RNA sequence: GGGAACGACUCGAGUAGAGUCGAAAAAUAUUAUGCGCGCUAUAUAAUAUAUAUAGCGUAUUAUCGCCGCUAUAUAGCGGCGAUACGCUAUAUACGCCGCUAUAUAGCGAUAAUACGCUAUAUAGCGGUACCUCCAUGUAUUCGUACAUGGAGGUACAAAAGAAACAACAACAACAAC
Reactivity to 2A3 in 0.01 (KOAc 150mM, MgCl2 10mM, bicine 150mM(pH8.5), 24C), signal-to-noise 3, nucleotides 027 to 126: a000u110a050u200u100a080u170g040c060g000c010g020c050u010a020u050a010u040a300a110u140a160u020a090u000a040u000a300g000c000g000u000a020u060u040a020u020c010g100c200c030g010c040u050a030u050a030u070a300g010c030g050g000c000g010a000u000a010c010g000c010u000a000u000a000u000a130c040g000c000c000g020c000u000a000u010a000u000a000g000c000g000a000u060a070a040u050a050c000g000c000u000a000u000a000u000a010g000c020g020
Reactivity to DMS in 0.01 (KOAc 150mM, MgCl2 10mM, bicine 150mM(pH8.5), 24C), signal-to-noise 4, nucleotides 027 to 126: a110u000a030u010u000a060u000g020c050g010c020g000c040u000a040u000a050u010a090a140u010a130u020a040u000a010u000a000g010c000g010u000a010u010u000a040u000c030g030c130c130g020c040u000a110u000a110u010a030g040c000g000g020c020g000a010u000a000c070g010c040u000a040u000a050u000a060c110g020c000c000g010c000u000a010u000a000u000a000g010c000g010a040u000a060a080u000a120c000g010c000u000a000u000a000u000a010g020c030g000
Chemical mapping of a 177-nucleotide RNA with 2A3 and DMS. It was measured as part of the RMDB library OK2TRN. DMS adducts were read by reverse transcription with MarathonRT. The reactions ran in a buffer of 150 mM KOAc, 10 mM MgCl2 and 150 mM bicine (pH 8.5), at 24 C.